[RMDB]
RNA sequence: GGGAACGACUCGAGUAGAGUCGAAAACCCUGUCAUGAGGCCGAAACGAAGGCACGUACCCCUUCGAAUGGCGUCGGGGAGUCAGCGGCUAUAUAUGCGCCUAAUACUGGCAUCCGGGAACGAGCGUAUUAGACAGUAAUCUUCGGAUUACUGUCAACAAAGUAUCGUAGUUCGCUACGAUACUUUGAAAAGAAACAACAACAACAAC
Reactivity to 2A3 in 0.01 (KOAc 150mM, MgCl2 10mM, bicine 150mM(pH8.5), 24C), signal-to-noise 4, nucleotides 027 to 156: c010c000c020u030g080u090c110a130u090g060a040g050g040c010c000g080a090a060a030c010g020a020a020g040g060c130a010c040g120u150a100c000c010c020c000u030u010c050g060a130a110u160g040g000c020g060u020c030g020g010g000g010a080g020u060c010a000g030c010g060g000c030u030a020u020a040u010a030u300g120c060g000c000c010u050a130a040u110a100c030u010g060g000c070a110u000c010c040g010g000g040a040a070c050g010a030g050c040g000u060a080u100u080a090g000a000c000a000g000u000a000a000u010c020u040u060c160g040g000a000u000u000a000c000u010g000u000c010a000a000
Reactivity to DMS in 0.01 (KOAc 150mM, MgCl2 10mM, bicine 150mM(pH8.5), 24C), signal-to-noise 3, nucleotides 027 to 156: c000c000c030u000g000u010c100a070u000g010a090g040g040c010c000g000a090a120a180c020g020a040a070g000g020c060a140c110g010u010a130c070c040c000c010u000u010c020g010a180a140u000g040g080c030g030u010c050g000g000g010g010a150g020u000c080a100g080c010g010g030c010u000a100u000a120u010a140u020g010c070g010c030c020u000a080a120u000a090c040u000g010g010c050a100u030c050c040g020g010g030a110a070c040g010a110g020c050g040u000a140u000u000a140g010a020c000a030g030u000a010a010u000c010u000u010c300g040g000a040u000u010a020c060u000g010u000c000a050a060